[RMDB]
The data come from the RNA Mapping Database (RMDB), library M2RFPK. This 207-nucleotide RNA was probed chemically with 2A3.
RNA sequence: GGGAACGACUCGAGUAGAGUCGAAAAACGGUCGUACGCGACCGAGGCGCGGCUAGGUCGACGGACCGAACAAUGGCAUCCCGCAUUCUGCCAUCCGCCGCGCAGCUUCAUCUCAAACGGUGCGGAAAAAAGUAGGACACCUUCGGGUGUCCUACAAGUGAGCCUAAAGGUUCGCCUUUAGGCUCACAAAAGAAACAACAACAACAAC
Reactivity to 2A3 in 0.01 (KOAc 150mM, MgCl2 10mM, bicine 150mM(pH8.5), 24C), signal-to-noise 2, nucleotides 027 to 156: a000c000g010g000u010c000g030u050a030c300g010c010g090a000c000c040g010a030g000g030c000g000c000g000g000c000u010a000g000g000u010c010g070a160c190g160g060a000c010c000g000a010a000c010a000a000u000g010g000c000a030u120c010c040c000g020c000a030u300u110c020u010g020c000c000a010u010c010c040g000c020c010g000c000g000c000a000g000c010u130u090c060a050u060c010u010c020a050a060a030c050g020g000u000g000c020g000g000a120a000a000a000a000a000g000u000a000g010g010a000c000a000c010c010u040u080c150g030g010g010u000g010u010c000c000u000a000c010a010a000
Values are in units of 0.01, from 0 to 300, in steps of 10.